[RMDB]
RNA sequence: GGGAACGACUCGAGUAGAGUCGAAAAGAUAUGGACCAGACCUGGAGCUCUGUCGGAAACGACGGAGCGUUGAAAGGUGUGGUCCUAAGUCAAAACGCGUUUUACAGGUUCGCCUGUAAAACGCGAAUCGUUAAACUUAGUUCGCUAAGUUUAACGAAAAAGAAACAACAACAACAAC
Reactivity to 2A3 in 0.01 (KOAc 150mM, MgCl2 10mM, bicine 150mM(pH8.5), 24C), signal-to-noise 5, nucleotides 027 to 126: g020a030u070a050u140g010g000a000c000c010a010g100a050c010c010u010g030g020a020g000c000u000c000u010g010u000c010g020g030a150a060a040c010g000a000c010g000g010a000g040c000g000u060u020g010a020a000a000g010g000u070g220u000g070g000u000c000c000u000a010a000g020u010c020a010a030a070a100c020g000c000g000u010u000u000u010a010c000a010g020g060u030u080c230g150c070c000u000g000u020a000a000a000a000c000g000c000g000a000a020
Reactivity to DMS in 0.01 (KOAc 150mM, MgCl2 10mM, bicine 150mM(pH8.5), 24C), signal-to-noise 7, nucleotides 027 to 126: g010a040u000a300u010g010g010a020c000c000a010g000a010c000c000u000g010g010a120g010c000u000c000u000g010u000c000g010g000a100a110a160c010g010a020c000g010g000a000g010c010g000u000u000g000a150a150a020g000g010u000g000u000g000g000u000c000c000u000a000a070g010u000c040a080a060a120a210c010g010c000g000u000u000u000u000a000c000a010g000g010u000u000c280g010c000c000u000g000u000a000a000a000a000c000g020c000g000a010a010